[RMDB]
RNA sequence: GGGAACGACUCGAGUAGAGUCGAAAAAUUUGGAUAUAGUUAAUCCCAACAAUGAUAUAGCAUUGCGCAUAGUAUUAGUCAUAAACUUGGGAUGUAAAAUGUUGAUGAUAUCUACAUCGUUUGGAUUUUUAUGUAUCCACUUUAAUAAUAUCAUAGCGAUAUCGAGUACGUUCGCGUACUCGAUAUCAAAAGAAACAACAACAACAAC
Reactivity to DMS in 0.01 (KOAc 150mM, MgCl2 10mM, bicine 150mM(pH8.5), 24C), signal-to-noise 1, nucleotides 027 to 156: a130u000u000u000g020g000a040u000a010u000a050g000u000u030a000a070u000c010c010c030a060a040c050a020a040u000g020a160u030a090u000a160g000c000a040u010u030g020c130g050c030a120u000a140g020u010a090u000u020a080g020u000c050a160u000a070a000a070c090u000u020g020g000g000a040u000g000u010a030a040a090a100u000g010u000u020g000a050u000g010a030u010a020u000c030u000a060c060a010u000c040g030u020u030u020g010g000a020u000u010u000u000u020a060u050g020u000a020u000c000c000a000c070u000u000u000a030a050u010a060a120u010a110u000c030a060u000a130g010c230
Reactivity to 2A3 in 0.01 (KOAc 150mM, MgCl2 10mM, bicine 150mM(pH8.5), 24C), signal-to-noise 2, nucleotides 027 to 156: a000u020u020u010g000g000a010u010a000u000a020g050u040u120a020a000u000c000c000c010a010a010c010a020a020u040g010a010u030a000u020a040g000c020a010u020u060g070c060g040c110a020u000a060g030u080a120u210u040a070g020u050c020a000u060a160a190a040c030u050u080g030g030g020a020u050g020u060a020a080a000a010u050g050u050u050g020a060u040g000a060u030a010u020c010u010a060c010a040u050c050g000u020u000u010g010g000a010u080u000u000u000u050a130u200g010u000a020u000c000c010a000c000u000u140u020a120a010u130a180a100u110a060u180c100a080u100a060g140c030

Overview: The record gives the reactivity of an RNA of 207 nucleotides to DMS and 2A3. The data come from the RNA Mapping Database (RMDB), library OK3TST. The DMS profile rests on 2,445 reads. Values are in units of 0.01, from 0 to 300, in steps of 10.